Chemical mapping of a 177-nucleotide RNA with DMS and 2A3. For DMS, 3,024 sequencing reads were counted. DMS (dimethyl sulfate) methylates the pairing face of unpaired adenines and cytosines. 2A3 adducts were read by reverse transcription with SuperScript II with manganese. Source: RMDB library OK1LIB, as collected in RNAgym.
RNA sequence: GGGAACGACUCGAGUAGAGUCGAAAACUACGUCAUUACGAUGACGUAGAAUAAAUUCAGCGGUUUAAAUUUCGACCGCAUAACCGCUGAUGCGGUCGAAAAAGCCUGGCGUUACGACGCCAGGCAAAUUUACCCGUAUGUUCGCAUACGGGUAAAUAAAAGAAACAACAACAACAAC
Reactivity to DMS in 0.01 (KOAc 150mM, MgCl2 10mM, bicine 150mM(pH8.5), 24C), signal-to-noise 2, nucleotides 027 to 126: c010u000a010c000g000u000c010a000u000u020a200c210g030a090u000g010a010c000g030u000a020g000a100a030u020a080a070a130u020u010c040a030g010c180g000g000u040u010u010a040a080a120u000u010u010c000g000a030c000c000g060c000a000u000a060a060c140c060g010c100u000g010a030u000g000c000g020g010u000c000g000a030a010a060a090a090g000c040c000u000g000g060c010g030u000u010a170c200g020a140c050g000c000c030a010g000g080c030a000a000
Reactivity to 2A3 in 0.01 (KOAc 150mM, MgCl2 10mM, bicine 150mM(pH8.5), 24C), signal-to-noise 3, nucleotides 027 to 126: c000u000a000c000g000u010c010a010u030u100a060c220g110a020u020g010a000c010g010u000a010g000a010a030u120a000a040a030u180u120c050a050g040c080g100g080u110u140u170a120a150a090u110u170u070c030g000a000c000c010g000c000a000u030a040a070c040c020g020c070u050g000a010u060g000c000g000g000u000c000g030a000a000a000a020a000g000c010c010u010g000g010c020g000u020u040a110c260g030a010c010g070c000c000a000g010g000c000a010a010